[RMDB]
RNA sequence: GGGAACGACUCGAGUAGAGUCGAAAAAGAGUACGGCCGCAAGGUUUCCGGUUGUGGAUGGCAGCGUGUGUGUCGCCCCGUCGUCUAGUGGUGGUUCUAGGGCUGGGGCGUCAGCAUCCAGGUAAAAUCAAAGGAUAUGUUUCGACAUAUCCUUUGAAAAAGAAACAACAACAACAAC
Reactivity to DMS in 0.01 (KOAc 150mM, MgCl2 10mM, bicine 150mM(pH8.5), 24C), signal-to-noise 6, nucleotides 027 to 126: a090g000a110g010u000a080c090g010g010c030c030g020c110a070a080g010g000u000u000u000c030c030g020g000u000u000g020u010g010g010a050u000g010g010c090a060g010c080g010u000g000u000g010u010g020u000c010g010c010c010c010c010g010u000c030g010u010c010u000a030g020u000g010g020u010g010g000u000u000c020u000a030g000g000g010c020u000g040g010g010g010c010g010u000c020a050g010c030a040u000c040c030a080g000g010u000a040a050a090a140
Reactivity to 2A3 in 0.01 (KOAc 150mM, MgCl2 10mM, bicine 150mM(pH8.5), 24C), signal-to-noise 3, nucleotides 027 to 126: a020g070a000g030u090a030c030g050g000c040c020g000c050a030a050g080g030u020u050u050c030c020g040g030u060u080g060u060g050g030a060u030g070g000c050a050g010c070g020u120g000u070g050u010g010u050c010g000c000c000c010c000g020u040c000g020u020c010u020a030g010u050g170g070u070g030g060u070u050c000u020a020g060g010g010c080u160g070g030g000g000c000g010u010c000a000g010c020a020u000c020c010a020g040g030u100a040a050a020a080